[RMDB]
RNA sequence: GGGAACGACUCGAGUAGAGUCGAAAAUUACUCUAUUUAGUGCAAAACUAUAAUUUCUCGUACAACAUAAAAUGUGAAGAAAAGUUAUAGUUAGAUUCAAGCAGGAGGAAGUAUACAAAUGUUUGAAGAGCUACAUGUUUUUCGAAACAUGUAGCUCAAAAGAAACAACAACAACAAC
Reactivity to 2A3 in 0.01 (KOAc 150mM, MgCl2 10mM, bicine 150mM(pH8.5), 24C), signal-to-noise 2, nucleotides 027 to 126: u050u030a050c000u070c050u000a110u030u210u150a210g020u170g090c030a040a030a040a040c000u000a000u000a000a000u000u010u000c010u030c010g030u140a070c040a180a000c000a050u070a130a120a000a060u030g010u020g010a060a260g010a050a060a000a000g040u050u000a000u000a000g010u060u030a000g020a070u220u110c090a060a050g000c000a030g000g120a040g190g040a170a080g130u080a120u000a180c040a010a070a000u000g010u010u000u020g020a050a020
Reactivity to DMS in 0.01 (KOAc 150mM, MgCl2 10mM, bicine 150mM(pH8.5), 24C), signal-to-noise 1, nucleotides 027 to 126: u050u010a070c000u000c040u010a180u020u000u000a040g000u000g000c070a040a060a000a070c000u020a000u000a040a000u070u000u000c020u000c000g010u000a230c090a050a060c060a000u020a020a160a000a300u000g000u020g000a160a190g000a000a070a000a020g000u000u000a050u000a010g000u000u010a100g000a160u000u050c090a000a050g000c120a070g010g010a050g060g010a120a020g000u020a070u020a020c070a060a170a140u000g000u010u000u010g000a060a040
An RNA of 177 nucleotides, treated with 2A3 and DMS and read out base by base. For 2A3 the reverse transcriptase was SuperScript II with manganese. The RNA was probed in 150 mM KOAc, 10 mM MgCl2 and 150 mM bicine (pH 8.5) at 24 C. Source: RMDB library RFM100, as collected in RNAgym. Reactivities are given for positions 27 through 126.